[RMDB]
RNA sequence: GGGAACGACUCGAGUAGAGUCGAAAAUCUGCUAUCCAGAACGAUGGCUACAAAUCCCUGGACGAAGGUCAGAAAGUAUCCUUCACCAUCGAAAGCGGCGCUAAAGGCCCGGCAGCUGGCAACGUAAUCAGAAAGAUUAGUUCGCUAAUCUUUCUGAAAAAGAAACAACAACAACAAC
Reactivity to 2A3 in 0.01 (KOAc 150mM, MgCl2 10mM, bicine 150mM(pH8.5), 24C), signal-to-noise 1, nucleotides 027 to 126: u040c040u060g000c020u010a000u030c020c040a110g060a130a020c040g010a020u010g010g000c020u080a040c060a040a120a090u040c010c010c010u010g030g030a070c040g020a040a010g030g000u080c050a030g220a080a220a000g100u070a060u040c010c000u000u020c010a020c020c010a040u070c020g060a090a060a020g050c040g040g000c070g000c080u120a200a180a100g080g010c010c020c000g030g000c000a010g000c000u040g050g030c000a010a060c020g020u040a030a110
Reactivity to DMS in 0.01 (KOAc 150mM, MgCl2 10mM, bicine 150mM(pH8.5), 24C), signal-to-noise 3, nucleotides 027 to 126: u000c160u010g020c030u010a080u010c020c140a180g010a130a240c150g000a000u000g000g010c030u000a120c160a050a080a180u000c010c010c010u010g000g020a090c070g000a040a040g010g000u000c060a130g000a090a040a120g000u010a090u010c010c000u000u010c020a200c030c020a040u020c050g000a090a070a180g000c070g010g020c050g030c050u010a040a090a170g000g000c040c090c030g000g000c040a030g030c040u000g000g000c050a060a070c130g010u000a110a160